[RMDB]
RNA sequence: GGGAACGACUCGAGUAGAGUCGAAAAUCUUCCAUCGCGCUUCUUCCUCGAUUCGGACCGGCUCAUCUCGACAAGAGGCGGCGAUCCUCAGUGCUCUUACUCUUUUCUGUAAAGAGGAGACUGCUGGAUCCGCCGCCCAAGUUCGAGCAUGAGCCAAGCUUAAUCUUGACUUCGGUCAAGAUUAAGCAAAAGAAACAACAACAACAAC
Reactivity to 2A3 in 0.01 (KOAc 150mM, MgCl2 10mM, bicine 150mM(pH8.5), 24C), signal-to-noise 3, nucleotides 027 to 156: u060c030u230u080c070c020a110u060c010g040c020g000c060u170u080c010u120u050c110c010u020c000g020a050u010u030c000g000g020a020c030c030g020g000c000u000c000a000u000c010u000c000g010a010c030a100a110g130a110g050g000c010g000g000c000g000a000u000c000c000u010c000a060g030u160g300c060u010c020u110u280a300c020u020c000u040u070u130u100c160u300g290u300a000a010a030g010a020g010g010a000g000a010c000u000g090c040u010g000g010a000u010c020c180g000c000c010g000c000c000c000a010a000g010u050u050c000g000a000g000c020a000u000g000a000g000c010c000a000a000
Conditions: 150 mM KOAc, 10 mM MgCl2 and 150 mM bicine (pH 8.5), 24 C. Structure probing data (2A3) for a 207-nucleotide construct. The data come from the RNA Mapping Database (RMDB), library VIROID.